RNA sequence: GGGAACGACUCGAGUAGAGUCGAAAACGGACAUCAAGCCCGCCGUGAAGGUGCAGCUGCUCGCCAGCCUGGCCGACGCCUACAACAAGUCGAUCAGCGCAUCGAAGCGGGUACUACCGGAAACCUCCAGCCUGGCCACCGCAAUGGAAGUCAUCCACCGAUGAGACUUUUUCGAAAGUCUCAUCGGAAAAGAAACAACAACAACAAC
Reactivity to 2A3 in 0.01 (KOAc 150mM, MgCl2 10mM, bicine 150mM(pH8.5), 24C), signal-to-noise 1, nucleotides 027 to 156: c010g000g060a020c020a110u180c070a100a000g030c060c000c000g000c000c010g110u090g180a200a050g000g030u020g000c030a000g050c060u070g010c010u050c060g070c040c050a030g060c050c050u030g000g030c030c050g150a060c130g030c000c000u240a160c060a240a040c010a230a060g000u030c000g000a020u000c000a010g010c000g000c000a020u040c020g050a100a000g000c010g000g000g000u030a010c000u040a000c000c000g130g040a090a070a020c020c000u080c050c010a060g070c010c030u030g030g000c030c030a030c080c000g040c120a130a020u050g010g010a100a000g080u040c000a070u000c010c010a030